Description: Structure probing data (2A3 and DMS) for a 207-nucleotide construct. 2A3 adducts were read by reverse transcription with SuperScript II with manganese. The reactions ran in a buffer of 150 mM KOAc, 10 mM MgCl2 and 150 mM bicine (pH 8.5), at 24 C. For DMS the reverse transcriptase was MarathonRT. In probing experiments dimethyl sulfate is read out at A N1 and C N3, which are open when not base-paired.
RNA sequence: GGGAACGACUCGAGUAGAGUCGAAAACACGCAAGUACACAAGGCCAGUAGUCAAUGUUUUCCAAGUCAUACAGUGCAAUCCGACGCUCUGUAUAAACAUUAACCGUGUACUCGAAAUCAACAUUAGGCCACUUAACAUCAAGCAUGUAGUCGAACAGUUUUGGUGUAGAUUCGUCUACACCAAAACAAAAGAAACAACAACAACAAC
Reactivity to 2A3 in 0.01 (KOAc 150mM, MgCl2 10mM, bicine 150mM(pH8.5), 24C), signal-to-noise 3, nucleotides 027 to 156: c080a010c030g070c040a050a030g010u020a010c010a000c020a070a150g010g030c010c020a040g030u060a020g020u110c070a030a010u010g020u000u050u020u000c110c030a100a010g080u080c020a020u000a020c000a010g000u000g030c020a060a170u100c090c090g070a070c110g060c000u000c000u000g020u000a010u040a030a050a000c000a020u000u100a050a010c020c050g000u000g010u030a010c010u020c030g060a080a030a030u180c040a010a060c030a110u100u200a020g010g010c020c000a030c040u060u100a060a040c020a050u090c080a090a000g040c030a060u090g020u100a040g080u120c040g050a070a070c030a110
Reactivity to DMS in 0.01 (KOAc 150mM, MgCl2 10mM, bicine 150mM(pH8.5), 24C), signal-to-noise 2, nucleotides 027 to 156: c040a100c050g130c070a110a110g050u000a030c020a050c040a120a110g030g010c000c010a120g010u000a080g000u010c010a080a040u000g000u000u000u010u020c120c060a080a100g000u020c100a080u000a000c010a040g030u000g040c020a180a170u000c120c130g030a160c150g010c000u000c010u000g010u000a020u000a030a040a010c000a100u000u000a040a040c050c050g050u010g040u000a030c000u000c000g020a070a070a060u010c060a080a120c080a150u000u000a120g030g000c010c000a080c110u000u000a090a070c040a060u000c050a050a140g040c030a080u020g000u000a060g050u000c030g010a050a070c120a160